[RMDB]
RNA sequence: GGGAACGACUCGAGUAGAGUCGAAAAGGGGUACUAAUUCAAAAGGAAAGUACUAUGAACACUCCUGUCUACCCAGUACCCAAGCCAAAUGGUCGCUGGAGAAUGGUACUGGACUACAGAGCAGUAAAUAAAGUCACACCUUUGAUAGCUGUACAAACUACCACUAAAUGUUCGCAUUUAGUGGUAGAAAAGAAACAACAACAACAAC
Reactivity to 2A3 in 0.01 (KOAc 150mM, MgCl2 10mM, bicine 150mM(pH8.5), 24C), signal-to-noise 7, nucleotides 027 to 156: g040g010g020g010u030a010c030u060a040a190u080u080c060a080a070a040a060g040g010a190a060a010g040u050a020c030u050a140u150g060a050a020c020a010c060u010c020c020u010g000u000c010u040a100c030c000c000a010g000u000a000c000c000c020a010a010g010c020c010a090a200a160u180g110g010u190c070g020c070u040g030g060a110g160a210a140u150g010g000u000a000c000u010g000g000a010c000u020a010c010a010g040a040g030c100a000g050u090a020a060a100u110a040a140a010g010u020c020a020c010a030c050c000u030u010u020g040a050u070a040g050c120u060g010u050a020c030a030a080a030
Reactivity to DMS in 0.01 (KOAc 150mM, MgCl2 10mM, bicine 150mM(pH8.5), 24C), signal-to-noise 2, nucleotides 027 to 156: g020g010g040g020u000a070c040u010a110a140u000u010c050a020a090a050a120g020g000a150a180a170g000u000a100c050u000a100u000g030a190a150c070a030c000u010c000c040u000g010u010c060u000a130c110c010c000a060g000u000a050c000c000c050a130a170g030c000c010a060a120a150u010g010g040u000c100g040c110u020g000g010a150g000a100a150u010g010g010u000a010c010u020g000g010a060c030u000a130c020a040g000a110g010c020a070g010u000a070a150a070u000a070a060a090g000u000c090a090c050a140c010c020u000u000u000g000a120u000a090g010c060u000g030u000a070c070a090a080a160